An RNA of 177 nucleotides, treated with DMS and read out base by base. It was measured as part of the RMDB library 15KREP. The RNA was probed in 150 mM KOAc, 10 mM MgCl2 and 150 mM bicine (pH 8.5) at 24 C. The DMS profile rests on 1,061 reads.
RNA sequence: GGGAACGACUCGAGUAGAGUCGAAAAUAGCAGAGUCCGGGACCCCCUCCUAAAAGACCGAGGGGGGGUGCUUGGAGCACGGGGGUCCCAGUGGAUCCGUGGGAUGCUCCUCCCGAUUCCGAUAUCCGUAAAGGGAUAUCUUCGGAUAUCCCUUUACAAAAGAAACAACAACAACAAC
Reactivity to DMS in 0.01 (KOAc 150mM, MgCl2 10mM, bicine 150mM(pH8.5), 24C), signal-to-noise 1, nucleotides 027 to 126: u000a040g040c010a020g000a030g020u000c080c050g040g010g000a100c030c000c000c010c010u000c010c020u000a090a080a120a120g010a200c270c160g000a040g020g000g010g000g000g000g030u000g010c150u000u000g000g010a030g020c010a000c020g000g010g000g000g000u000c000c000c180a110g020u010g030g000a010u000c020c010g030u000g010g000g010a150u000g000c000u000c000c020u000c000c000c000g000a080u000u000c000c010g010a100u000a060u010c110c100